[RMDB]
RNA sequence: GGGAACGACUCGAGUAGAGUCGAAAAGAGCAAUUUGCACACUUGAUUCCGCUUAUGAGAAAGGGUCAACCUUGGCACAUUGUUAGACGCCGUAUAGUGCAGAUGGUCUGUGACUAUUUUGAUGGCUUAUCAGACAUUCUGAUCUUUGUGCUUUGGGCAAAGCCACCCUAUUCGUAGGGUGGCUUUGAAAAGAAACAACAACAACAAC
Reactivity to 2A3 in 0.01 (KOAc 150mM, MgCl2 10mM, bicine 150mM(pH8.5), 24C), signal-to-noise 5, nucleotides 027 to 156: g070a010g030c100a100a140u150u160u240g060c030a030c000a020c050u040u040g020a040u160u100c010c020g030c100u170u160a170u280g160a080g090a090a030a040g040g000g000u030c020a050a050c000c000u010u010g010g000c000a000c010a010u010u020g050u090u170a110g030a150c090g010c010c010g020u050a000u010a010g010u010g000c000a010g030a160u230g100g160u110c000u030g050u050g150a060c000u000a040u000u120u080u200g190a140u130g000g020c010u030u040a000u020c000a000g080a080c060a150u200u040c040u010g010a010u020c000u000u020u010g000u000g000c000u020u040u030g010g000g000
Reactivity to DMS in 0.01 (KOAc 150mM, MgCl2 10mM, bicine 150mM(pH8.5), 24C), signal-to-noise 3, nucleotides 027 to 156: g010a120g010c030a110a090u010u000u000g000c070a090c070a120c060u000u000g000a180u000u000c010c020g010c050u000u000a080u010g000a120g010a080a100a090g020g030g020u000c040a060a040c010c020u000u000g020g010c030a040c020a040u000u000g020u000u000a080g020a130c130g020c010c020g000u010a080u000a040g040u000g020c010a090g010a120u000g010g010u000c010u000g010u000g020a040c030u000a050u000u000u000u010g010a090u010g000g020c010u000u010a120u000c010a080g010a080c080a130u000u000c010u000g000a050u000c040u010u010u010g030u000g010c030u010u000u010g030g000g000
Conditions: 150 mM KOAc, 10 mM MgCl2 and 150 mM bicine (pH 8.5), 24 C. This 207-nucleotide RNA was probed chemically with 2A3 and DMS. For DMS the reverse transcriptase was MarathonRT. High DMS reactivity at an A or C suggests that its Watson-Crick edge is free. The 2A3 profile rests on 2,727 reads. For DMS, 6,254 sequencing reads were counted.